Overview: The record gives the reactivity of an RNA of 207 nucleotides to DMS and 2A3. Reactivities are given for positions 27 through 156. Source: RMDB library OK3TST, as collected in RNAgym.
[RMDB]
RNA sequence: GGGAACGACUCGAGUAGAGUCGAAAAGGAGCUCGGGAUGCUCUAAAUCCUAGGAAGAGCAUCCGUACGCUCUUCCUUACCACCUGAGCGUAUUGAAGUGUAGGUGGUUUUGAGACACUUCAGUGAGGGCUCAAAAGGACAUUGCUCUUACCGAGCAGAUGGAUUUAUGAUUCGUCAUAAAUCCAUCAAAAGAAACAACAACAACAAC
Reactivity to DMS in 0.01 (KOAc 150mM, MgCl2 10mM, bicine 150mM(pH8.5), 24C), signal-to-noise 4, nucleotides 027 to 156: g020g010a130g010c010u000c070g010g010g020a080u000g000c020u010c020u010a060a080a120u000c070c050u000a120g020g020a110a060g000a040g010c010a060u000c050c170g020u000a040c230g000c020u000c000u000u000c000c020u000u030a090c040c040a100c020c040u020g000a070g010c000g030u000a110u000u000g020a050a090g020u000g000u000a060g030g030u000g020g000u020u000u000u000g010a140g000a090c020a060c020u000u000c040a090g030u020g020a090g010g030g010c010u000c030a040a030a130a090g000g020a130c130a100u010u000g010c020u000c050u000u000a160c080c050g020a110g010c040a140
Reactivity to 2A3 in 0.01 (KOAc 150mM, MgCl2 10mM, bicine 150mM(pH8.5), 24C), signal-to-noise 7, nucleotides 027 to 156: g070g000a030g010c040u040c110g050g030g010a020u040g000c000u000c000u010a110a090a050u060c030c020u060a050g080g020a050a010g000a000g000c010a020u030c040c030g020u030a020c050g000c000u000c000u010u010c000c000u010u040a020c010c010a040c000c030u030g030a030g020c030g040u090a110u110u090g060a090a040g020u020g010u130a040g030g080u090g060g000u040u020u040u080g020a020g000a010c030a020c090u020u030c040a080g000u040g150a060g030g110g010c010u010c000a060a080a000a010g040g000a030c050a110u090u090g010c000u010c000u040u070a100c050c060g000a010g000c010a010